[RMDB]
RNA sequence: GGGAACGACUCGAGUAGAGUCGAAAAAGCCAUGUACUAGGUCUCGAUCGACUGAUCGAUCCACUAGUCGAUCGAGGUACCAUGCAUGACAUGGUGCUAGCGUACAGUACUGAUCCGUCGAUCGAUCACGCUGGACGUAGUUCGCUACGUCCAGCGUAAAAGAAACAACAACAACAAC
Reactivity to 2A3 in 0.01 (KOAc 150mM, MgCl2 10mM, bicine 150mM(pH8.5), 24C), signal-to-noise 2, nucleotides 027 to 126: a020g060c010c010a040u050g040u010a030c070u050a050g130g060u020c020u000c010g000a000u000c000g030a010c000u040g040a000u070c010g030a060u060c090c040a080c050u050a020g000u000c010g000a030u040c020g030a010g000g000u000a000c000c010a000u020g020c010a150u300g040a160c010a000u030g000g000u010g030c020u040a050g060c020g050u080a030c050a070g000u030a040c040u080g000a040u000c020c030g030u060c030g000a030u030c010g020a010u050c070
Reactivity to DMS in 0.01 (KOAc 150mM, MgCl2 10mM, bicine 150mM(pH8.5), 24C), signal-to-noise 1, nucleotides 027 to 126: a110g000c020c040a070u020g000u010a060c090u000a150g000g020u010c030u000c010g000a000u000c010g000a010c010u030g000a000u000c040g000a060u010c210c140a150c170u010a020g000u000c000g000a010u000c030g000a060g010g030u000a020c010c000a060u010g010c020a170u020g000a070c000a050u010g010g000u000g000c060u000a080g030c140g030u020a020c010a050g020u000a050c120u010g000a050u000c020c090g000u000c060g010a020u010c010g020a060u020c040
Background
Structure probing data (2A3 and DMS) for a 177-nucleotide construct. As a SHAPE reagent, 2A3 marks flexible, mostly unpaired nucleotides at the ribose 2'-OH. It was measured as part of the RMDB library OK2TRN. The RNA was probed in 150 mM KOAc, 10 mM MgCl2 and 150 mM bicine (pH 8.5) at 24 C.